Record summary: This 177-nucleotide RNA was probed chemically with DMS.
RNA sequence: GGGAACGACUCGAGUAGAGUCGAAAAAUGUAGUUGAAACUUGAUUUUCUUCAGUUGUAACUGCUUCCGUUGCAGUUGGUUCAACUAAAACCUCUUCCACUAAAACAGCUUUCUCUUCAACUAAGUCAAUACUAGGCAUCUUCGGAUGCCUAGUAUUAAAAGAAACAACAACAACAAC
Reactivity to DMS in 0.01 (KOAc 150mM, MgCl2 10mM, bicine 150mM(pH8.5), 24C), signal-to-noise 1, nucleotides 027 to 126: a060u000g040u000a020g000u000u000g010a080a020a020c040u020u000g030a070u000u020u010u010c220u010u000c020a050g040u020u000g000u000a030a020c000u000g000c000u000u010c160c140g010u010u000g000c080a010g030u000u000g040g000u000u010c030a060a020c030u000a050a050a160a120c110c010u000c040u000u000c000c010a080c090u010a010a030a070a060c110a080g000c070u020u000u000c030u000c020u000u000c060a030a070c150u010a060a070g000u000c110